[RMDB]
RNA sequence: GGGAACGACUCGAGUAGAGUCGAAAAUGGACGGCGAAAGAAUAGGAGCUGACAGGACACCGAAGCUUCUAGGAGUAACAUUCCAGUGUCUGCAGGGGAUGGCAACACAUGCGGCCGAAACGAGACGACAGGGUCUGCUAUUCGUAGCAGACCCUGUAAAAGAAACAACAACAACAAC
Reactivity to 2A3 in 0.01 (KOAc 150mM, MgCl2 10mM, bicine 150mM(pH8.5), 24C), signal-to-noise 1, nucleotides 027 to 126: u180g030g040a000c070g030g000c100g030a130a030a000g140a030a010u160a070g000g000a020g000c000u000g120a150c000a070g030g000a000c000a020c140c000g000a000a000g050c040u070u070c060u030a000g000g000a010g140u020a030a080c110a050u250u000c000c000a020g000u000g000u290c030u100g000c080a120g000g020g020g020a000u070g080g000c000a060a000c000a000c000a200u050g160c080g000g000c000c000g000a080a020a020c050g000a000g040a000c130g000
Reactivity to DMS in 0.01 (KOAc 150mM, MgCl2 10mM, bicine 150mM(pH8.5), 24C), signal-to-noise 1, nucleotides 027 to 126: u020g000g000a100c020g000g010c050g000a130a110a220g030a300a250u050a060g000g000a010g000c000u000g000a110c300a060g030g020a100c270a030c100c090g000a270a050g000c000u000u030c000u000a030g000g050a300g000u000a070a130c080a150u050u070c030c040a100g000u000g000u000c030u000g010c000a030g000g010g000g000a030u050g000g010c000a000a010c100a070c080a060u000g000c000g000g020c010c000g000a050a000a070c080g000a110g040a220c050g000
An RNA of 177 nucleotides, treated with 2A3 and DMS and read out base by base.
DMS adducts were read by reverse transcription with MarathonRT.
Conditions: 150 mM KOAc, 10 mM MgCl2 and 150 mM bicine (pH 8.5), 24 C.
High DMS reactivity at an A or C suggests that its Watson-Crick edge is free.
The 2A3 profile rests on 418 reads.
It was measured as part of the RMDB library OK1LIB.